Source information: An RNA of 177 nucleotides, treated with DMS and 2A3 and read out base by base. 2A3 adducts were read by reverse transcription with SuperScript II with manganese. It was measured as part of the RMDB library M2PK90. DMS (dimethyl sulfate) methylates the pairing face of unpaired adenines and cytosines. The 2A3 profile rests on 6,970 reads.
[RMDB]
RNA sequence: GGGAACGACUCGAGUAGAGUCGAAAAAUGAACGUGGUGGGCGUAAGUUAGUAGAAGAUCUAAUGGUACGCGGUGGGUUUUCGACUGUACUCGAAUCCACCACCACCACCAAGUCGUUCCCACCGAAACAUAACCUAGCAUUCGUGCUAGGUUAUGUAAAAGAAACAACAACAACAAC
Reactivity to DMS in 0.01 (KOAc 150mM, MgCl2 10mM, bicine 150mM(pH8.5), 24C), signal-to-noise 3, nucleotides 027 to 126: a080u010g010a020a030c030g000u010g010g050u010g010g000g040c000g010u000a180a300g010u010u000a010g020u010a140g010a170a120g000a090u000c010u000a010a010u000g010g020u000a030c000g010c030g010g050u000g000g000g010u000u000u000u000c010g010a010c030u000g000u000a030c050u000c000g010a040a040u000c020c020a030c000c040a110c130c140a040c010c000a020c010c170a070a040g010u000c000g000u010u000c000c000c010a070c170c190g010a080a070
Reactivity to 2A3 in 0.01 (KOAc 150mM, MgCl2 10mM, bicine 150mM(pH8.5), 24C), signal-to-noise 4, nucleotides 027 to 126: a020u280g000a030a010c020g020u010g000g000u000g010g000g020c010g010u010a020a010g010u010u010a000g000u020a030g100a300a030g010a080u060c000u020a030a010u040g250g050u060a000c000g000c010g010g000u000g010g010g020u030u010u030u100c010g010a010c020u130g080u200a040c010u000c000g000a000a020u020c000c000a000c010c010a010c010c000a010c000c000a010c010c010a020a000g000u010c000g000u000u000c010c000c000a010c000c020g070a110a080